[RMDB]
This 207-nucleotide RNA was probed chemically with 2A3 and DMS. 2A3 adducts were read by reverse transcription with SuperScript II with manganese.
RNA sequence: GGGAACGACUCGAGUAGAGUCGAAAACACUGCUGCUGGGUGUGCAGACCCCCAGUCUCAUGCCUGCCUGUGAUGCCAGUCUCCUUCUCAUCAUGCACGGCUGCCUUUCUCUCCCUGUAGGGUAAAUUCGAAGAGGCUGAAGCUGAAUUCAUCAGAAUAAUAUGACCAUGUUCGCAUGGUCAUAUUAAAAAGAAACAACAACAACAAC
Reactivity to 2A3 in 0.01 (KOAc 150mM, MgCl2 10mM, bicine 150mM(pH8.5), 24C), signal-to-noise 2, nucleotides 027 to 156: c030a020c020u090g030c050u030g010c000u030g010g000g020u060g010u020g010c020a010g040a060c020c000c010c000c010a010g020u000c000u010c000a020u070g000c000c010u020g010c010c000u050g010u030g030a040u080g060c030c040a070g030u010c030u050c020c020u120u070c020u000c040a120u060c010a050u150g020c070a010c070g030g000c050u060g000c000c010u020u090u000c060u010c010u030c100c020c000u060g120u090a150g000g010g010u100a120a130a100u120u100c060g030a080a030g020a010g050g010c000u040g040a040a020g010c010u020g030a070a020u120u080c010a100u060c140a090g040a070a010
Reactivity to DMS in 0.01 (KOAc 150mM, MgCl2 10mM, bicine 150mM(pH8.5), 24C), signal-to-noise 2, nucleotides 027 to 156: c030a160c060u000g030c020u000g030c050u010g000g000g020u000g000u010g010c170a070g010a170c020c000c020c010c030a120g000u000c030u000c040a090u010g020c000c000u000g030c040c010u000g030u000g050a090u000g020c030c040a070g000u000c040u000c020c000u000u010c040u000c060a080u000c060a070u000g010c030a100c060g030g040c040u000g000c030c020u010u000u000c020u000c040u000c040c020c020u010g020u000a090g020g040g010u000a030a070a160u000u000c060g000a070a120g010a120g010g010c030u000g020a040a230g010c040u010g000a070a170u000u000c070a090u010c050a090g010a170a300

Source: RMDB library OK3TST, as collected in RNAgym. The RNA was probed in 150 mM KOAc, 10 mM MgCl2 and 150 mM bicine (pH 8.5) at 24 C. Reactivities are rounded to 0.1 and cut off at 0 and 3.